Structure probing data (2A3 and DMS) for a 177-nucleotide construct. Conditions: 150 mM KOAc, 10 mM MgCl2 and 150 mM bicine (pH 8.5), 24 C.
RNA sequence: GGGAACGACUCGAGUAGAGUCGAAAAUCGUGAAGCUCGGGCACGAAGGCCGCCAUCACCAGGUCGAUGAUGGUCACGAAGGUGGCGAUCACCACGAUGAAGGAGGGGAUGCGUACCUUCUCCGGGACGACCUCCUUUUGUUCGCAAAAGGAGGUCGAAAAGAAACAACAACAACAAC
Reactivity to 2A3 in 0.01 (KOAc 150mM, MgCl2 10mM, bicine 150mM(pH8.5), 24C), signal-to-noise 1, nucleotides 027 to 126: u080c030g000u080g050a100a000g020c010u000c020g030g040g000c000a000c110g040a030a030g030g020c030c000g010c050c000a000u030c010a030c030c010a070g000g190u080c040g000a010u020g000a000u020g070g070u020c000a000c040g040a060a060g170g000u000g000g020c030g010a000u000c010a010c050c020a080c030g030a020u110g110a040a120g080g060a090g030g040g050g000a010u030g000c010g070u120a170c000c030u020u000c020u020c020c010g010g000g000a020
Reactivity to DMS in 0.01 (KOAc 150mM, MgCl2 10mM, bicine 150mM(pH8.5), 24C), signal-to-noise 2, nucleotides 027 to 126: u020c080g010u000g020a060a110g010c030u010c030g000g000g010c050a040c110g000a070a070g030g010c300c020g000c100c030a040u010c000a070c020c050a160g000g030u000c070g000a100u000g000a030u000g000g030u010c040a050c080g020a120a080g000g030u010g020g010c010g000a020u010c010a060c030c030a090c040g000a120u030g000a120a160g000g020a110g030g000g000g020a030u010g020c030g000u010a070c000c010u000u000c010u000c010c010g040g010g000a070